[RMDB]
RNA sequence: GGGAACGACUCGAGUAGAGUCGAAAAAUGAAAGCGUGGACAACGGAGAUCAAAUAGACCAAUUACUGAAUAUGGCUUUUGACAUAUCUUCUUCUUCAUGGGUGAGGAUUAAGCUGAUAUCCUGACCCUAUAAUGGCAACUUCGGUUGCCAUUAUAGAAAAGAAACAACAACAACAAC
Reactivity to DMS in 0.01 (KOAc 150mM, MgCl2 10mM, bicine 150mM(pH8.5), 24C), signal-to-noise 9, nucleotides 027 to 126: a060u020g010a090a080a070g000c060g010u010g000g010a060c110a080a070c150g000g000a040g000a060u000c030a020a030a040u020a040g000a150c010c010a040a080u010u010a160c210u020g010a080a070u020a080u000g000g000c020u000u010u000u000g000a080c170a090u030a060u010c030u000u000c020u010u010c090u000u000c070a060u010g000g010g000u000g000a020g010g000a020u010u010a060a100g020c190u030g000a080u030a030u000c000c000u000g000a010c000c010
Reactivity to 2A3 in 0.01 (KOAc 150mM, MgCl2 10mM, bicine 150mM(pH8.5), 24C), signal-to-noise 9, nucleotides 027 to 126: a000u190g050a040a020a010g070c030g020u060g030g020a020c010a070a020c120g020g000a020g000a020u020c010a010a020a060u160a060g120a180c010c010a030a050u100u070a130c100u150g100a110a060u200a120u100g020g000c000u040u010u030u030g040a030c060a090u180a060u040c020u030u010c000u040u010c000u060u040c050a090u090g020g000g000u030g110a000g000g010a010u030u040a090a060g100c120u110g070a050u030a010u120c000c000u010g050a010c000c020

Structure probing data (DMS and 2A3) for a 177-nucleotide construct. The RNA was probed in 150 mM KOAc, 10 mM MgCl2 and 150 mM bicine (pH 8.5) at 24 C. 2A3 adducts were read by reverse transcription with SuperScript II with manganese. For DMS the reverse transcriptase was MarathonRT.